[RMDB]
RNA sequence: GGGAACGACUCGAGUAGAGUCGAAAAAUUUAUUCAGCACGCGACUGCCGCAUCCCGCACGGGAGGCGCAGCUGCUGCAUGACGCUUUAACGUCGCAGCUCACCACCGCCUGACCAUUCUGCCAGGAUCAUAAGUCGGUUUUCGAACCGACUUAUGAAAAAGAAACAACAACAACAAC
Reactivity to DMS in 0.01 (KOAc 150mM, MgCl2 10mM, bicine 150mM(pH8.5), 24C), signal-to-noise 3, nucleotides 027 to 126: a020u010u020u010a100u030u030c050a090g030c030a050c110g010c020g000a100c030u000g010c070c040g040c040a030u000c000c020c020g010c280a110c220g040g000g000a030g040g000c020g010c060a050g010c020u000g020c000u000g000c040a060u030g000a020c030g050c040u020u030u010a080a130c040g000u010c010g000c030a070g000c020u000c050a100c050c010a090c090c040g010c010c030u000g020a070c080c070a050u000u010c040u010g000c030c030a070g020g010a160
Reactivity to 2A3 in 0.01 (KOAc 150mM, MgCl2 10mM, bicine 150mM(pH8.5), 24C), signal-to-noise 6, nucleotides 027 to 126: a000u170u170u100a120u080u090c030a030g020c010a010c090g020c020g120a100c030u020g080c090c040g010c020a040u010c000c000c010g100c100a100c150g010g010g010a020g000g000c010g000c010a000g000c020u030g000c000u000g010c020a060u190g030a000c010g030c050u170u110u160a140a030c020g010u000c010g010c020a000g000c020u030c020a050c020c000a030c010c010g020c000c010u040g020a060c010c020a060u070u010c000u020g030c030c010a030g040g020a070

Record summary
The data come from the RNA Mapping Database (RMDB), libraries RFM100 and RFMREP. Structure probing data (DMS and 2A3) for a 177-nucleotide construct. DMS adducts were read by reverse transcription with MarathonRT.